[RMDB]
RNA sequence: GGGAACGACUCGAGUAGAGUCGAAAACCCAGCUCUGUACCUGUAGGGGGAUGGAAUCUGCUAAAAGUGUUCUGGAGUCGUUCUUGGAUAUCUGCUUGGUAUCUUCUCAAUAUCUUGACCAUCUGUGGUUUCUUAAACGAUUCGUCGUUUAAGAAACAAAAGAAACAACAACAACAAC
Reactivity to DMS in 0.01 (KOAc 150mM, MgCl2 10mM, bicine 150mM(pH8.5), 24C), signal-to-noise 5, nucleotides 027 to 126: c010c000c010a170g010c080u010c050u010g000u010a070c050c040u010g010u010a080g000g010g000g010g020a070u010g000g010a110a090u000c040u010g000c070u010a060a080a100a080g010u010g010u010u000c040u000g000g000a010g010u000c010g000u000u000c010u000u000g020g010a030u010a040u000c030u000g000c100u020u000g010g000u000a030u000c020u000u010c050u000c060a090a050u020a070u010c050u000u010g010a100c050c040a050u010c050u000g010u010g000
Reactivity to 2A3 in 0.01 (KOAc 150mM, MgCl2 10mM, bicine 150mM(pH8.5), 24C), signal-to-noise 9, nucleotides 027 to 126: c000c000c000a010g000c030u040c020u060g080u090a080c010c000u050g050u120a080g040g030g000g000g040a020u050g020g030a030a060u030c020u050g030c050u110a060a050a040a040g090u090g060u120u070c050u080g040g000a000g000u000c000g000u020u000c000u010u030g030g010a010u010a030u060c040u050g130c090u170u120g020g010u020a020u010c000u100u010c040u020c020a110a120u080a100u130c050u060u100g050a060c010c020a070u040c040u060g080u090g130